[RMDB]
RNA sequence: GGGAACGACUCGAGUAGAGUCGAAAAUACGUGGACGAGGGCAUGCCCAAGACACACCUUAACCCUGGCGGGGGUCGCUAGGGUGAAAUCACAUUAUGUGAGGGGGGUACGACCUGAUAGGGUGCUGCAAAUGCAGGCGAUUCGUCGCCUGCAUUUGAAAAGAAACAACAACAACAAC
Reactivity to DMS in 0.01 (KOAc 150mM, MgCl2 10mM, bicine 150mM(pH8.5), 24C), signal-to-noise 2, nucleotides 027 to 126: u000a050c240g050u000g000g000a090c060g000a300g030g060g010c070a060u000g010c000c000c020a090a220g010a140c080a010c040a100c050c050u010u000a180a050c000c000c000u000g020g000c020g020g030g000g030g020u000c000g020c000u000a000g000g000g000u000g000a050a050a080u010c000a000c020a190u030u010a070u010g000u000g020a050g000g000g000g000g000g000u000a060c130g010a100c000c000u000g020a110u010a050g000g000g010u010g020c080u010g000